[RMDB]
An RNA of 177 nucleotides, treated with 2A3 and DMS and read out base by base. 2A3 adducts were read by reverse transcription with SuperScript II with manganese. Reactivities are given for positions 27 through 126.
RNA sequence: GGGAACGACUCGAGUAGAGUCGAAAACGGGUGGUCGCUGUACACUAUCCCCAGAUACAGCCAUUGAUAGCCUCCUUGAAGCAGCACUUGUCAAAGACACAAAGGUUCAAGGUGAGCUUUGGACGACGGCACUUCAACGAUUCGUCGUUGAAGUGCCAAAAGAAACAACAACAACAAC
Reactivity to 2A3 in 0.01 (KOAc 150mM, MgCl2 10mM, bicine 150mM(pH8.5), 24C), signal-to-noise 1, nucleotides 027 to 126: c120g090g010g000u040g040g000u060c020g000c000u000g010u010a000c000a020c030u040a050u120c020c010c020c020a000g000a040u040a050c000a000g000c030c000a120u010u300g130a060u160a130g000c010c000u010c000c010u010u040g040a020a000g080c120a020g040c080a050c140u040u040g000u050c070a250a070a160g010a090c030a000c040a030a110a030g040g050u040u000c010a000a000g020g020u010g050a110g000c000u040u050u110g080g020a010c060g020a000c090
Reactivity to DMS in 0.01 (KOAc 150mM, MgCl2 10mM, bicine 150mM(pH8.5), 24C), signal-to-noise 1, nucleotides 027 to 126: c300g030g000g000u000g020g010u000c180g020c010u000g030u000a040c030a030c000u040a120u000c010c000c000c300a150g010a130u000a020c010a000g030c010c160a020u020u010g000a140u000a040g010c000c010u000c010c000u000u000g000a050a030g010c030a120g030c090a060c200u010u010g030u000c130a080a100a100g000a120c050a030c210a050a040a130g010g000u000u010c000a010a050g000g000u000g000a200g020c000u000u000u000g000g000a070c070g000a110c200

The 2A3 profile rests on 1,253 reads.